Description: Structure probing data (2A3) for a 177-nucleotide construct.
RNA sequence: GGGAACGACUCGAGUAGAGUCGAAAAAUCUAAGACCUUCUUUUGCAGCUAGCUUUCAAGCACAGGAAGUUUGACAACUUGACACUUGCUUCGUAGUCGAUUUGUGAACACUUUAAUAGCAAUGGCAUACCCGCACCGAUUUCGAUCGGUGCGGGUAAAAAGAAACAACAACAACAAC
Reactivity to 2A3 in 0.01 (KOAc 150mM, MgCl2 10mM, bicine 150mM(pH8.5), 24C), signal-to-noise 1, nucleotides 027 to 126: a000u300c090u300a160a000g220a190c000c000u100u140c000u000u010u040u040g000c000a150g110c000u020a090g000c000u140u000u000c300a300a000g000c220a000c060a000g000g230a220a290g000u140u000u060g300a090c000a160a000c090u010u000g000a050c000a090c030u000u050g000c000u000u230c100g000u070a000g000u010c000g210a210u000u000u160g040u000g000a000a000c140a000c000u000u020u000a020a020u050a050g000c090a240a240u230g000g000c020a020
Values cover nucleotides 27 to 126. The data come from the RNA Mapping Database (RMDB), library OK1LIB. For 2A3, 238 sequencing reads were counted.